[RMDB]
The record gives the reactivity of an RNA of 177 nucleotides to DMS. For DMS the reverse transcriptase was MarathonRT. The RNA was probed in 150 mM KOAc, 10 mM MgCl2 and 150 mM bicine (pH 8.5) at 24 C. The DMS profile rests on 729 reads. Values are in units of 0.01, from 0 to 300, in steps of 10. Source: RMDB library VIROID, as collected in RNAgym.

RNA sequence: GGGAACGACUCGAGUAGAGUCGAAAAGAGUGGACGUCUGUCCUCCUUCGGAUGCCCAGGUCGGACCGCGAGGAGGUGGAGAUGCCAUGCCGACCCGAAGAGGAAAGAAGGACGCGAGACACGAACCCCUUAAGGACUCGUUCGCGAGUCCUUAAGGAAAAGAAACAACAACAACAAC
Reactivity to DMS in 0.01 (KOAc 150mM, MgCl2 10mM, bicine 150mM(pH8.5), 24C), signal-to-noise 1, nucleotides 027 to 126: g030a140g050u000g000g000a040c010g010u000c040u010g030u010c010c010u000c010c050u000u000c010g000g000a210u050g000c060c100c030a080g010g020u000c070g000g010a210c040c060g020c140g000a080g020g010a020g030g050u020g020g010a030g010a040u000g000c020c000a080u010g010c030c030g010a090c000c010c020g010a100a050g020a150g000g020a120a120a070g040a040a060g010g010a060c040g020c030g000a020g000a080c050a020c100g010a110a190c020c010